[RMDB]
RNA sequence: GGGAACGACUCGAGUAGAGUCGAAAAGAUAUGGACGCCAGGACAUGCUCCACUCGGAAACGAGGAGAGCAACAGCCUGUGCGUCCUAAGUCAAACGUAUCAACCGCGUUCGCGCGGUUGAUACGAAUCGAAUAAGAUCCUUCGGGAUCUUAUUCGAAAAAGAAACAACAACAACAAC
Reactivity to DMS in 0.01 (KOAc 150mM, MgCl2 10mM, bicine 150mM(pH8.5), 24C), signal-to-noise 3, nucleotides 027 to 126: g000a020u010a260u030g000g000a030c010g000c020c000a020g000g010a060c060a220u000g000c010u020c000c260a220c000u010c000g000g010a070a030a110c010g000a010g000g010a300g000a000g020c010a030a050c300a140g000c020c000u000g000u010g000c000g000u000c000c000u000a000a050g000u020c040a100a090a290c020g000u020a000u000c000a000a020c000c000g030c000g030u020u000c200g000c030g000c000g010g010u000u000g010a000u000a000c000g000a040a050
Reactivity to 2A3 in 0.01 (KOAc 150mM, MgCl2 10mM, bicine 150mM(pH8.5), 24C), signal-to-noise 1, nucleotides 027 to 126: g010a020u050a020u050g000g000a000c000g020c000c000a000g000g030a190c070a270u150g010c010u030c010c040a150c030u000c010g000g020a070a000a010c010g010a020g020g040a090g000a000g060c010a070a040c060a040g030c000c010u030g000u050g020c000g000u000c000c000u010a030a000g010u000c020a050a030a080c020g000u030a000u000c000a000a000c010c000g030c040g070u040u050c280g020c000g010c010g200g020u000u000g000a000u010a010c000g000a000a030
Annotation:
The record gives the reactivity of an RNA of 177 nucleotides to DMS and 2A3. Conditions: 150 mM KOAc, 10 mM MgCl2 and 150 mM bicine (pH 8.5), 24 C. Reactivities are given for positions 27 through 126. The 2A3 profile rests on 3,202 reads.